[RMDB]
RNA sequence: GGGAACGACUCGAGUAGAGUCGAAAAGAUAUGGAGCCAUGACUCGCAUCCCAUGGUCGGAAACGACCAUGAACUGAACUACGAGACAUGGCUCCUAAGUCAAAACCGAAUGGUUCGCCAUUCGGAAUCCGUGUGUAAUGUUCGCAUUACACACGGAAAAAGAAACAACAACAACAAC
Reactivity to DMS in 0.01 (KOAc 150mM, MgCl2 10mM, bicine 150mM(pH8.5), 24C), signal-to-noise 2, nucleotides 027 to 126: g010a030u000a300u000g000g000a000g020c000c000a000u000g010a100c000u000c010g030c110a130u000c160c270c000a000u000g000g010u000c000g000g000a030a030a090c020g030a000c000c000a000u000g020a060a070c280u000g010a080a100c260u000a070c040g000a010g000a140c020a020u000g000g000c000u000c000c000u000a020a040g060u020c030a100a040a060a160c000c000g000a030a000u000g000g060u000u010c210g010c000c010a000u000u000c010g000g010a000a050
Reactivity to 2A3 in 0.01 (KOAc 150mM, MgCl2 10mM, bicine 150mM(pH8.5), 24C), signal-to-noise 2, nucleotides 027 to 126: g010a000u010a000u040g000g000a010g000c000c000a030u000g000a020c000u020c010g150c160a110u130c060c000c000a010u000g010g030u010c000g020g000a030a000a000c000g010a010c010c010a010u010g000a030a030c040u050g080a090a050c080u300a210c300g000a000g020a000c010a000u000g010g010c000u000c010c000u000a000a000g000u000c020a000a000a040a100c020c010g000a010a010u010g010g050u070u050c250g080c050c010a000u000u000c000g000g000a010a080